[RMDB]
RNA sequence: GGGAACGACUCGAGUAGAGUCGAAAAAAUCUGUCAUGGAUAACCCAGUGGGAGGUCAGCCGCUAAGACGAUAACCUUGCUUCGGUUCUCCACACCAGCGGGACCGGUGCCUGGUACGAAUCCUGGGGACCCCUCAGUGAUUCGUCACUGAGGGGUCAAAAGAAACAACAACAACAAC
Reactivity to DMS in 0.01 (KOAc 150mM, MgCl2 10mM, bicine 150mM(pH8.5), 24C), signal-to-noise 2, nucleotides 027 to 126: a060a000u000c010u050g010u000c130a070u040g000g030a060u000a090a140c010c000c000a120g000u040g000g000g010a070g010g000u000c020a060g020c000c020g030c030u000a130a030g020a070c070g040a100u020a060a090c050c050u040u000g000c030u000u020c010g000g000u010u000c010u030c050c020a170c110a100c110c130a050g030c220g000g000g000a030c020c000g010g000u010g030c000c050u020g000g000u030a010c060g000a100a080u000c000c000u000g010g030g010
Reactivity to 2A3 in 0.01 (KOAc 150mM, MgCl2 10mM, bicine 150mM(pH8.5), 24C), signal-to-noise 1, nucleotides 027 to 126: a000a010u120c060u040g150u100c050a130u190g070g020a020u040a110a100c010c000c010a000g030u100g040g020g000a090g030g030u050c040a000g050c030c000g000c060u070a070a060g050a040c050g070a060u020a070a010c000c000u010u020g050c030u070u070c000g000g010u060u040c020u000c060c000a020c060a070c030c030a000g060c040g030g010g010a000c000c000g000g000u010g010c000c000u000g000g010u040a080c010g020a040a040u020c000c000u010g000g000g080